[RMDB]
An RNA of 177 nucleotides, treated with DMS and 2A3 and read out base by base. The reactions ran in a buffer of 150 mM KOAc, 10 mM MgCl2 and 150 mM bicine (pH 8.5), at 24 C. DMS adducts were read by reverse transcription with MarathonRT. As a SHAPE reagent, 2A3 marks flexible, mostly unpaired nucleotides at the ribose 2'-OH. The data come from the RNA Mapping Database (RMDB), library TTRDEL. For DMS, 3,085 sequencing reads were counted.
RNA sequence: GGGAACGACUCGAGUAGAGUCGAAAAGAUAUGGAACCGUCACUGCAGACGAAGAACUCGGAAACGAGGGAGUCUGGGUGAGCGGUUCCUAAGUCAAAACUACUGGUACGUUCGCGUACCAGUAGAACGUCAGUUAUACGUUCGCGUAUAACUGACGAAAAGAAACAACAACAACAAC
Reactivity to DMS in 0.01 (KOAc 150mM, MgCl2 10mM, bicine 150mM(pH8.5), 24C), signal-to-noise 3, nucleotides 027 to 126: g000a040u020a300u000g010g010a000a000c000c000g010u000c010a020c000u000g010c010a020g020a000c000g000a090a190g010a120a130c000u010c000g000g000a130a050a220c000g000a010g000g000g000a070g020u000c000u000g000g000g010u000g010a060g010c010g000g000u000u000c000c000u000a010a060g010u010c010a070a040a130a190c020u010a000c000u000g000g000u010a000c000g000u000u020c190g020c020g010u000a000c010c000a000g010u000a010g010a050a070
Reactivity to 2A3 in 0.01 (KOAc 150mM, MgCl2 10mM, bicine 150mM(pH8.5), 24C), signal-to-noise 3, nucleotides 027 to 126: g010a010u090a060u180g020g000a020a000c000c000g040u020c040a040c050u300g300c070a010g010a000c020g190a300a060g030a040a030c010u010c010g000g040a060a030a050c020g010a010g000g030g020a010g010u020c010u010g000g000g000u020g020a130g080c030g000g020u000u000c000c000u000a000a000g040u020c030a000a020a100a140c020u010a000c000u000g000g000u010a000c000g020u020u100c300g000c010g100u000a000c000c000a010g000u000a000g000a020a000